An RNA of 177 nucleotides, treated with DMS and read out base by base. It was measured as part of the RMDB library TTRDEL. High DMS reactivity at an A or C suggests that its Watson-Crick edge is free. The reactions ran in a buffer of 150 mM KOAc, 10 mM MgCl2 and 150 mM bicine (pH 8.5), at 24 C.
RNA sequence: GGGAACGACUCGAGUAGAGUCGAAAAGAUAUGGAUUACCGAGCCUUCAUAUCGGAAACGAUAUGAGGCGAUGAGGUACGGUCCUAAGUCAAACGCUGGAUGCUCCGUUCGCGGAGCAUCCAGCGAAGUUAUCAGGACAGUUCGCUGUCCUGAUAACAAAAGAAACAACAACAACAAC
Reactivity to DMS in 0.01 (KOAc 150mM, MgCl2 10mM, bicine 150mM(pH8.5), 24C), signal-to-noise 1, nucleotides 027 to 126: g000a060u010a300u000g000g010a030u010u000a010c000c010g010a170g000c010c000u010u000c000a030u000a010u010c000g000g000a060a040a220c000g010a000u000a000u000g000a000g020g010c000g010a060u000g000a170g000g000u010a040c300g000g010u000c040c000u010a040a060g010u010c040a170a060a130c060g130c010u010g000g000a010u000g030c000u010c000c010g030u000u020c210g010c000g040g000a000g030c000a050u010c000c000a010g010c000g000a000a080